[RMDB]
RNA sequence: GGGAACGACUCGAGUAGAGUCGAAAAGCGAGCAGUUCGCCAUCGUGCCGCGCAUCACCGAACUGGUGACGGGCGUACAGCAGACCCGAAAGCAUAUGAAGACCGCGUACCUGGACGAAACCAGAUGCCUAAAAGCUAGGUUCGCCUAGCUUUUAGGAAAAGAAACAACAACAACAAC
Reactivity to 2A3 in 0.01 (KOAc 150mM, MgCl2 10mM, bicine 150mM(pH8.5), 24C), signal-to-noise 2, nucleotides 027 to 126: g050c020g020a020g030c030a030g060u080u070c020g010c030c010a080u120c020g070u040g040c040c020g000c020g010c070a040u030c010a030c020c010g090a260a130c130u160g000g040u010g020a020c020g030g040g000c030g030u040a020c030a030g030c010a010g020a100c000c010c010g040a080a050a000g030c030a050u070a040u240g040a070a020g050a030c030c000g030c040g030u030a050c000c000u010g020g010a030c040g030a050a020a000c010c010a020g010a080u160g100
Reactivity to DMS in 0.01 (KOAc 150mM, MgCl2 10mM, bicine 150mM(pH8.5), 24C), signal-to-noise 4, nucleotides 027 to 126: g020c040g010a060g020c090a100g020u010u000c060g020c010c040a070u010c090g030u000g030c080c040g030c050g010c050a140u000c010a010c010c000g000a110a130c180u020g000g030u000g010a050c080g000g000g000c020g010u000a050c080a100g000c070a100g000a120c000c030c030g010a080a090a090g010c070a070u000a090u010g000a100a090g000a090c050c020g000c040g010u000a050c030c020u000g000g010a030c080g000a070a070a110c020c020a050g010a050u010g010